[RMDB]
RNA sequence: GGGAACGACUCGAGUAGAGUCGAAAAACUAGUAUGUACAGGGGUGAGUUGACCUGUCAUCUAGACUGCUGACCUUCAACUCACCGGUCAGCUGGAUGAUGUCCACAGAGUACGACAUCAGUACUCAGAGUAAGGAUUCGUUCGCGGAUCUUUACUCAAAAGAAACAACAACAACAAC
Reactivity to 2A3 in 0.01 (KOAc 150mM, MgCl2 10mM, bicine 150mM(pH8.5), 24C), signal-to-noise 9, nucleotides 027 to 126: a000c010u010a000g050u110a060u060g050u070a010c000a010g030g020g010g050u110g070a110g030u050u060g080a070c000c000u010g000u000c000a000u000c000u010a020g060a100c030u030g000c000u000g000a000c000c000u010u040c040a070a060c040u020c070a050c020c040g000g000u000c000a000g000c010u010g030g010a070u090g010a020u070g050u030c010c010a060c060a070g030a000g020u030a010c050g090a030c100a160u130c050a050g010u010a010c000u010c030a010
Reactivity to DMS in 0.01 (KOAc 150mM, MgCl2 10mM, bicine 150mM(pH8.5), 24C), signal-to-noise 9, nucleotides 027 to 126: a210c010u000a010g000u040a010u000g010u060a010c010a020g000g000g000g000u010g010a060g020u010u000g000a080c040c010u000g000u000c000a010u000c000u000a020g000a180c050u000g000c020u000g000a010c010c030u010u020c090a040a050c060u010c070a060c140c190g000g000u000c000a020g000c010u010g010g000a130u020g010a080u010g000u000c010c030a110c230a110g000a030g010u000a030c040g010a140c160a090u030c100a110g010u000a020c010u000c020a170